[RMDB]
RNA sequence: GGGAACGACUCGAGUAGAGUCGAAAAAGCUGCUGAGUUUCCAGGUUCUUCCCUUCUCUUGGAAGAGGAUGGUUGGGAAUAUACUUAGAUUAUCUGUGUCAUUAAGUGAUUCACUCCUCCAGGAAUUGACACCAUUCUUUACAAAAUCAGCCUGAGACCAUUUAUAGCCGUUCGCGGCUAUAAAUGGAAAAGAAACAACAACAACAAC
Reactivity to 2A3 in 0.01 (KOAc 150mM, MgCl2 10mM, bicine 150mM(pH8.5), 24C), signal-to-noise 1, nucleotides 027 to 156: a000g010c020u110g000c010u000g020a040g030u020u080u010c020c000a000g010g000u060u000c020u090u080c010c000c030u040u040c060u020c010u000u090g020g000a020a040g000a040g010g040a010u030g020g090u090u070g060g010g040a020a020u110a010u040a160c020u020u010a000g080a140u110u030a070u100c120u090g110u070g020u090c000a060u030u100a040a020g030u020g040a020u020u010c010a060c050u030c030c010u070c010c030a060g020g030a090a080u090u120g070a000c000a010c060c010a050u060u010c040u000u100u080a090c070a030a070a040a060u020c040a000g010c000c000u020g040a060g000a060
The data come from the RNA Mapping Database (RMDB), library OK3TST. The record gives the reactivity of an RNA of 207 nucleotides to 2A3. For 2A3 the reverse transcriptase was SuperScript II with manganese. Values cover nucleotides 27 to 156. The reactions ran in a buffer of 150 mM KOAc, 10 mM MgCl2 and 150 mM bicine (pH 8.5), at 24 C. For 2A3, 635 sequencing reads were counted.